The record gives the reactivity of an RNA of 177 nucleotides to DMS and 2A3. Values cover nucleotides 27 to 126.
RNA sequence: GGGAACGACUCGAGUAGAGUCGAAAAGAUAUGGAUAGGCCUAACAUCGAAGAACUGCCUCGGAAACGAGGCAGGGAGAUGUAGGAACUACCUAUCCUAAGUCAAAAGACUGACUUCGGUCAGUCAAUCGAUAAUUGUGGUUCGCCACAAUUAUCGAAAAAGAAACAACAACAACAAC
Reactivity to DMS in 0.01 (KOAc 150mM, MgCl2 10mM, bicine 150mM(pH8.5), 24C), signal-to-noise 2, nucleotides 027 to 126: g000a020u000a300u000g000g000a010u000a000g000g020c030c000u030a080a090c030a000u000c000g000a150a210g020a160a260c020u000g000c000c000u000c000g000g010a080a100a210c020g010a020g020g000c000a010g000g020g000a100g010a040u000g000u010a020g010g000a110a040c050u000a300c080c000u000a010u000c010c000u010a010a130g010u000c060a170a110a090a140g010a010c000u000g010a010c000u010u020c270g050g020u000c000a000g010u000c000a060a090
Reactivity to 2A3 in 0.01 (KOAc 150mM, MgCl2 10mM, bicine 150mM(pH8.5), 24C), signal-to-noise 2, nucleotides 027 to 126: g020a010u060a020u100g020g010a020u010a000g000g010c010c010u090a200a090c030a010u040c030g300a300a070g000a130a010c000u000g010c010c000u000c000g050g020a110a060a040c020g010a030g000g000c010a000g010g000g010a010g000a010u010g010u020a000g000g050a020a010c030u120a060c070c000u010a000u000c000c000u020a160a070g090u030c030a040a000a000a210g030a000c000u020g000a000c010u080u090c300g080g020u020c000a000g010u020c010a000a060

Source information:
DMS adducts were read by reverse transcription with MarathonRT. For DMS, 1,940 sequencing reads were counted.